[RMDB]
RNA sequence: GGGAACGACUCGAGUAGAGUCGAAAAAUGGUAUUGUUGUCUUCUGUGUAUCACUUGUAUGUCUUCAAUCAGGUCUUAUCAAGUGAUGUUAUGUUUGAAGAUGCCCAAGGUUUGAAAAAGUUCUACAAUAGUCUACACUUCGGUGUAGACAAAAGAAACAACAACAACAAC
Reactivity to DMS in 0.01 (KOAc 150mM, MgCl2 10mM, bicine 150mM(pH8.5), 24C), signal-to-noise 3, nucleotides 027 to 129: a100u090g010g040u020a170u000u040g020u000u050g020u040c100u030u040c000u010g000u050g000u010a020u000c020a020c020u000u000g000u050a060u060g010u000c050u060u010c160a070a190u000c230a060g040g000u040c010u020u030a110u030c050a060a040g000u010g030a000u010g040u060u030a060u030g020u070u010u060g000a000a050g030a070u050g040c100c030c010a160a000g040g030u030u030u080g030a070a080a060a080a110g010u060u000c010u020a120c060a100a120u040a210
Reactivity to 2A3 in 0.01 (KOAc 150mM, MgCl2 10mM, bicine 150mM(pH8.5), 24C), signal-to-noise 2, nucleotides 027 to 129: a000u070g090g070u090a080u170u190g080u090u020g000u000c010u000u000c020u000g030u010g060u070a010u000c050a030c110u000u000g000u090a030u000g120u010c000u100u000c070a160a090u170c030a070g080g110u000c010u020u200a070u180c030a020a020g000u000g180a000u000g010u000u100a090u050g070u000u060u160g020a020a010g030a000u010g020c000c000c000a020a040g090g000u060u140u050g170a080a130a040a040a000g090u090u010c060u020a110c040a000a050u010a070